[RMDB]
RNA sequence: GGGAACGACUCGAGUAGAGUCGAAAAGAAAGAAAGAAGCGAGCUGGCGCAGCCGCACGGGCAACCGUCAAUCCAGCACUUCACAAUUCUUGUCGUUCUGACAGGACAUCCAUCAACCCACCGGGAAAAAAGGACUACAGCUUCGGCUGUAGUCCAACCUCAUAUCUGGGUUCGCCCAGAUAUGAGGAAAAGAAACAACAACAACAAC
Reactivity to 2A3 in 0.01 (KOAc 150mM, MgCl2 10mM, bicine 150mM(pH8.5), 24C), signal-to-noise 1, nucleotides 027 to 156: g040a000a040a010g040a030a090a000g000a030a000g000c060g080a020g000c030u010g060g000c050g030c180a120g070c040c130g130c030a040c050g020g010g020c090a150a100c010c010g000u000c000a050a010u080c000c000a010g000c020a010c040u060u070c010a020c000a160a120u100u020c010u000u000g000u020c050g110u160u000c060u300g020a000c000a000g040g040a070c030a080u080c070c000a070u040c010a120a090c000c020c030a060c080c120g000g010g000a080a090a000a000a010a000g010g000a040c000u000a000c000a000g000c030u070u190c300g190g010c000u000g000u000a000g010u000c000c000a000a000
The data come from the RNA Mapping Database (RMDB), library M2RFPK. An RNA of 207 nucleotides, treated with 2A3 and read out base by base. The 2A3 profile rests on 399 reads. For 2A3 the reverse transcriptase was SuperScript II with manganese.